[RMDB]
RNA sequence: GGGAACGACUCGAGUAGAGUCGAAAAGUUGGCUACCUGUGACUGGACUGAAAGUGGUGAUUACACCCUUGCCAAUACUACAACAGAACCACUCAAACUUUUUGCUGCUGAGACUUUACGUGCCACUCAAAGAUUAGUGGUUCGCCACUAAUCUUUGAAAAGAAACAACAACAACAAC
Reactivity to DMS in 0.01 (KOAc 150mM, MgCl2 10mM, bicine 150mM(pH8.5), 24C), signal-to-noise 3, nucleotides 027 to 126: g000u000u010g000g010c020u010a070c080c040u000g010u010g010a100c170u000g000g040a060c060u000g000a060a070a060g010u000g060g000u010g020a210u010u020a110c120a040c010c010c040u010u010g010c070c010a030a080u010a080c070u000a090c110a030a070c090a020g010a110a070c050c040a040c070u000c110a030a020a110c120u010u000u010u000u000g030c050u000g000c040u000g000a130g010a100c070u000u000u010a070c080g000u010g000c030c030a100c150u000
Reactivity to 2A3 in 0.01 (KOAc 150mM, MgCl2 10mM, bicine 150mM(pH8.5), 24C), signal-to-noise 3, nucleotides 027 to 126: g040u030u040g020g000c010u030a050c020c010u040g010u030g070a050c050u040g020g030a020c000u070g080a060a040a010g090u140g040g000u020g010a040u050u150a080c030a050c010c010c010u020u070g030c010c000a020a020u040a100c020u020a020c020a110a000c010a040g050a050a030c000c010a030c030u070c050a050a120a080c030u060u060u030u090u100g000c010u020g000c000u010g000a010g010a090c020u060u070u080a020c030g010u020g040c000c000a050c020u020
This 177-nucleotide RNA was probed chemically with DMS and 2A3. The reactions ran in a buffer of 150 mM KOAc, 10 mM MgCl2 and 150 mM bicine (pH 8.5), at 24 C. For DMS, 1,743 sequencing reads were counted. Source: RMDB library 15KREP, as collected in RNAgym.